Structure probing data (2A3 and DMS) for a 177-nucleotide construct. For DMS, 20,425 sequencing reads were counted. High DMS reactivity at an A or C suggests that its Watson-Crick edge is free. The data come from the RNA Mapping Database (RMDB), library OK2TRN.

RNA sequence: GGGAACGACUCGAGUAGAGUCGAAAACGUGAGUGUGGGCUUAGACUCGCGCGGGCUGGGGUGUGCGCCGUGGAGGGCGUGAGGCAGAGGGCGACCUCCCGGGGUGCUCCUGAGCUGAGCCAUCAAGAGUUUAUAGAGAGUUCGCUCUCUAUAAACUAAAAGAAACAACAACAACAAC
Reactivity to 2A3 in 0.01 (KOAc 150mM, MgCl2 10mM, bicine 150mM(pH8.5), 24C), signal-to-noise 7, nucleotides 027 to 126: c020g020u030g050a030g010u180g030u250g080g020g000c010u050u080a030g020a080c010u010c020g010c010g000c020g040g010g000c010u060g040g000g020g020u040g000u020g010c210g100c040c010g060u250g010g010a010g000g010g010c010g010u040g010a080g070g000c040a020g060a110g060g050g000c000g010a010c000c000u000c000c010c010g000g000g010g010u010g000c000u000c000c000u030g040a000g000c010u020g020a010g000c020c010a050u110c040a050a080g050
Reactivity to DMS in 0.01 (KOAc 150mM, MgCl2 10mM, bicine 150mM(pH8.5), 24C), signal-to-noise 5, nucleotides 027 to 126: c030g020u000g010a030g010u000g030u010g010g000g000c030u000u000a090g010a070c020u000c010g010c030g020c050g000g010g010c010u000g010g010g010g010u000g010u000g010c010g010c000c010g000u010g030g010a050g000g000g000c010g020u000g010a090g010g000c050a050g000a070g010g000g000c010g000a030c010c000u000c000c010c020g010g000g000g040u000g010c010u000c000c000u000g000a040g010c010u000g010a080g010c010c010a140u020c150a100a140g010